About this RNA: Source: RMDB library OK2TRN, as collected in RNAgym. Chemical mapping of a 177-nucleotide RNA with 2A3 and DMS. Reactivities are given for positions 27 through 126.
[RMDB]
RNA sequence: GGGAACGACUCGAGUAGAGUCGAAAAGCUACUUGGGAGGGUGAGGCAGGAGAAUUGCUUGAGCCUAGGUCAAGGCUAUAGUAACCUGUGACCACGCGACUGCACUCUAUCCUGGCCAACAAAGCGACCACUAUCAAGUAUUCGUACUUGAUAGUGGAAAAGAAACAACAACAACAAC
Reactivity to 2A3 in 0.01 (KOAc 150mM, MgCl2 10mM, bicine 150mM(pH8.5), 24C), signal-to-noise 9, nucleotides 027 to 126: g010c010u030a030c020u080u030g010g010g000a020g010g010g020u040g010a010g010g000c010a000g040g120a170g080a140a160u180u140g030c030u090u110g090a040g040c010c040u050a080g000g010u020c020a020a000g020g000c010u110a090u100a230g190u090a050a050c010c010u130g090u050g230a020c000c010a030c040g010c010g020a030c010u020g000c060a150c300u020c010u030a040u040c000c000u060g140g070c010c000a030a020c040a020a180a000g030c010g030a030
Reactivity to DMS in 0.01 (KOAc 150mM, MgCl2 10mM, bicine 150mM(pH8.5), 24C), signal-to-noise 9, nucleotides 027 to 126: g020c010u010a110c200u000u000g010g010g000a080g000g010g010u000g000a060g010g000c020a030g010g000a100g000a100a100u010u000g010c060u010u000g000a190g030c050c080u010a100g010g010u000c030a100a030g010g020c030u000a080u010a120g010u010a070a090c020c000u010g010u000g010a020c010c010a130c270g010c020g000a140c080u000g000c020a090c050u000c030u000a080u000c010c010u000g010g000c010c010a030a040c120a040a090a080g010c070g010a220
For 2A3 the reverse transcriptase was SuperScript II with manganese. For 2A3, 23,815 sequencing reads were counted.